RNA sequence: GGGAACGACUCGAGUAGAGUCGAAAAUAAGGGACAGCGCAACCGCUCAUCCGACAAGCCGCACACUUGUGUUGCUAGGGAAGGUGGUAGUGCAAAAGUGGUAUCGUGGUUCGCCACGAUACCACAACGAAAGCUAUAAGUUCGCUUAUAGCUUUCGAAAAGAAACAACAACAACAAC
Reactivity to 2A3 in 0.01 (KOAc 150mM, MgCl2 10mM, bicine 150mM(pH8.5), 24C), signal-to-noise 6, nucleotides 027 to 126: u110a020a030g070g000g030a030c040a070g000c010g000c020a010a020c010c010g000c020u070c050a250u030c010c010g090a110c070a050a010g020c010c020g020c030a010c010a040c160u300u190g000u000g010u020u020g010c000u020a030g050g000g010a030a010g010g000u000g010g000u010a040g010u030g010c030a000a050a020a060g000u000g010g000u000a000u010c000g010u010g020g030u060u070c160g040c040c000a000c010g000a000u000a000c000c000a000c000a000a000
Reactivity to DMS in 0.01 (KOAc 150mM, MgCl2 10mM, bicine 150mM(pH8.5), 24C), signal-to-noise 6, nucleotides 027 to 126: u010a110a110g000g000g000a130c150a130g020c010g020c030a100a040c020c010g010c020u010c070a150u000c000c010g010a160c070a070a040g010c070c100g000c010a020c010a290c260u010u000g020u000g010u000u000g010c010u000a150g000g010g010a050a200g010g010u000g000g010u000a040g030u000g000c030a060a030a100a120g010u000g010g000u010a010u000c000g010u000g010g020u000u000c230g000c000c000a000c000g000a010u000a000c000c000a000c000a010a090